[RMDB]
RNA sequence: GGGAACGACUCGAGUAGAGUCGAAAAGGAGACUGCUGGACUCUCCGCCCAAGCCGAGAUGGGCCUCAGUUCCGAGCGAAGAGCCGAACCGGGAAGAGGAAGCGCCCGAGAGGGAGCCAAUGCCAAAAUAGUACACACUUCGGUGUGUACAAAAGAAACAACAACAACAAC
Reactivity to 2A3 in 0.01 (KOAc 150mM, MgCl2 10mM, bicine 150mM(pH8.5), 24C), signal-to-noise 7, nucleotides 027 to 129: g030g010a010g010a020c040u060g060c060u070g060g010a020c010u010c020u010c050c000g010c000c000c000a030a020g040c010c010g040a050g010a030u020g010g020g010c000c010u020c010a020g010u060u020c020c010g000a010g000c040g020a030a020g010a010g020c020c020g000a020a010c000c020g010g010g010a020a020g010a010g020g010a020a030g030c050g020c030c020c010g040a040g010a030g010g000g000a010g010c010c010a060a050u120g040c000c020a060a050a040a020u200a090
Reactivity to DMS in 0.01 (KOAc 150mM, MgCl2 10mM, bicine 150mM(pH8.5), 24C), signal-to-noise 8, nucleotides 027 to 129: g000g000a070g010a040c100u040g020c070u000g020g030a070c070u010c070u020c000c000g040c000c040c010a110a200g030c060c040g010a040g030a040u020g030g000g030c030c030u000c090a070g030u000u000c030c090g000a090g000c050g040a050a040g030a070g000c110c080g010a060a050c030c060g000g000g000a040a050g020a030g010g030a040a070g050c180g050c080c040c040g010a100g000a110g030g030g030a060g030c000c000a070a140u050g010c080c090a100a090a030a070u080a120